An RNA of 177 nucleotides, treated with 2A3 and DMS and read out base by base. The data come from the RNA Mapping Database (RMDB), library OK2TST. The reactions ran in a buffer of 150 mM KOAc, 10 mM MgCl2 and 150 mM bicine (pH 8.5), at 24 C.
[RMDB]
RNA sequence: GGGAACGACUCGAGUAGAGUCGAAAAGUAGACCCUCUCUACCACCAGCUUGCCCUCGGUGAGAGUACCCGUCUUAUCAAAGACUAGCGUAUCUACCCUAACCGCCUUCUCAAGAACCUCGCUAUUCAAUCCCUAAACUAUUCGUAGUUUAGGGAUUAAAAGAAACAACAACAACAAC
Reactivity to 2A3 in 0.01 (KOAc 150mM, MgCl2 10mM, bicine 150mM(pH8.5), 24C), signal-to-noise 4, nucleotides 027 to 126: g050u060a030g060a090c010c010c010u030c010u020c020u060a040c000c010a020c000c010a030g050c030u060u080g050c020c000c010u030c040g030g000u030g020a060g010a000g030u050a040c010c030c010g020u000c020u040u170a260u120c070a140a050a010g020a050c030u050a000g010c010g060u040a030u000c010u020a060c010c000c010u010a040a030c010c000g020c010c000u070u030c020u030c030a030a040g030a060a030c010c010u040c060g010c050u090a150u120u090c020
Reactivity to DMS in 0.01 (KOAc 150mM, MgCl2 10mM, bicine 150mM(pH8.5), 24C), signal-to-noise 8, nucleotides 027 to 126: g010u000a080g010a130c070c050c030u000c070u000c020u010a080c060c040a110c050c030a080g010c050u000u000g010c030c020c030u010c080g000g010u000g010a070g000a070g010u000a070c030c040c120g010u010c010u000u000a110u010c170a080a070a050g000a040c030u000a070g020c090g020u000a050u000c050u000a090c030c010c020u000a070a100c070c080g010c040c010u000u000c020u000c050a050a100g010a110a120c050c040u000c070g020c070u000a100u010u010c080